[RMDB]
RNA sequence: GGGAACGACUCGAGUAGAGUCGAAAACCUACUCAAUACGUCCUCGUCGUACAGAACGGUAACAUGUUUUCCCAACAUCCGCGCUUGGGUAUACGAGUAUACACCUUACCCAACCCUCGCCAACGGGAGUGCAUCCACGAGUUCGCUCGUGGAUGAAAGCUUACGUUCAAUUCGUUGAACGUAAGCUAAAAGAAACAACAACAACAAC
Reactivity to 2A3 in 0.01 (KOAc 150mM, MgCl2 10mM, bicine 150mM(pH8.5), 24C), signal-to-noise 4, nucleotides 027 to 156: c010c000u010a040c030u070c060a030a180u080a130c030g060u050c000c020u040c010g040u010c020g000u050a070c020a080g100a170a040c020g030g030u110a090a060c030a130u070g070u030u040u050u030c030c000c000a010a020c020a060u040c020c020g030c000g020c070u040u030g000g000g020u040a050u050a080c080g010a030g090u020a030u030a080c120a070c020c030u040u080a050c000c000c040a020a040c000c010c000u050c030g030c000c030a070a040c020g020g010g020a050g040u080g030c000a000u000c000c000a000c000g000a000g010u080u050c150g060c100u000c000g010u000g000g000a000u000g000a000a000
Reactivity to DMS in 0.01 (KOAc 150mM, MgCl2 10mM, bicine 150mM(pH8.5), 24C), signal-to-noise 2, nucleotides 027 to 156: c050c010u000a090c020u010c030a070a190u000a110c040g020u000c010c020u010c010g010u010c110g000u000a110c050a040g020a020a070c040g000g000u020a100a140c080a070u010g000u010u020u000u000c040c000c000a160a030c030a120u000c030c030g030c080g000c090u010u020g000g010g050u000a050u000a100c060g010a130g050u000a090u000a110c120a130c080c020u010u000a040c010c020c010a100a060c020c000c000u000c120g000c080c050a050a090c050g010g020g010a050g020u000g000c020a060u000c000c000a000c000g010a020g050u000u000c300g020c020u000c010g070u000g000g000a010u000g010a010a090